Structure probing data (DMS and 2A3) for a 177-nucleotide construct. For DMS, 1,335 sequencing reads were counted. 2A3 adducts were read by reverse transcription with SuperScript II with manganese. For 2A3, 1,563 sequencing reads were counted.
RNA sequence: GGGAACGACUCGAGUAGAGUCGAAAAAAUGGCGCGGAGUGCAACCUUGUGGCCGCGCCCGAUCAAUUCGCGAGCCGUUAUCUCAUCAAUCCCGAUCGGAUCGCCAGCACGAACGGGUACACGCGCAGUGCCAUAAUGGUUUCGACCAUUAUGGCACAAAAGAAACAACAACAACAAC
Reactivity to DMS in 0.01 (KOAc 150mM, MgCl2 10mM, bicine 150mM(pH8.5), 24C), signal-to-noise 2, nucleotides 027 to 126: a130a060u010g050g020c020g020c000g040g000a070g030u020g040c050a090a150c160c210u010u010g030u000g000g000c000c030g030c020g020c030c010c010g000a060u000c040a100a150u030u000c020g000c010g000a020g000c000c010g000u000u010a130u010c030u010c030a170u020c170a050a060u000c020c030c010g020a070u000c080g010g000a140u000c110g010c020c060a040g000c100a050c050g020a040a140c080g040g010g000u000a060c080a070c080g020c070g010c120a090
Reactivity to 2A3 in 0.01 (KOAc 150mM, MgCl2 10mM, bicine 150mM(pH8.5), 24C), signal-to-noise 2, nucleotides 027 to 126: a000a000u140g010g020c000g000c010g000g050a070g200u150g110c020a100a160c060c110u070u120g010u080g030g050c000c010g000c010g030c040c010c010g010a010u050c040a040a110u150u020c030g000c020g040a010g000c010c010g040u080u100a170u070c060u000c040a130u100c030a030a090u080c000c000c000g000a010u010c000g020g010a040u020c030g000c060c010a020g000c000a010c020g000a030a020c010g000g000g040u060a040c080a020c040g050c020g000c030a050